An RNA of 177 nucleotides, treated with DMS and read out base by base. Source: RMDB library RFMREP, as collected in RNAgym. Conditions: 150 mM KOAc, 10 mM MgCl2 and 150 mM bicine (pH 8.5), 24 C.

RNA sequence: GGGAACGACUCGAGUAGAGUCGAAAAGCUGGUGCCCUGUGCUGCGGUGGGACGUCAAGGUCAGUUCGUAUGCUGCGGGAAAUGGCCGCCGAGGAGGUAGGGCUUACGCUUGCGUUUGUCUGUUAUAACUGCAAUUCAAGUUCGCUUGAAUUGCAGUAAAAGAAACAACAACAACAAC
Reactivity to DMS in 0.01 (KOAc 150mM, MgCl2 10mM, bicine 150mM(pH8.5), 24C), signal-to-noise 2, nucleotides 027 to 126: g020c010u000g020g020u010g010c000c000c020u000g000u010g000c000u000g030c000g010g000u000g020g010g010a080c080g000u010c060a060a200g000g010u010c010a060g000u010u000c230g000u010a140u010g000c030u010g020c050g030g010g000a080a070a040u010g020g010c020c020g020c040c020g010a110g000g000a060g010g010u020a040g010g010g000c010u000u010a060c180g000c010u020u000g010c090g010u010u010u000g020u000c070u010g010u000u010a120u020a110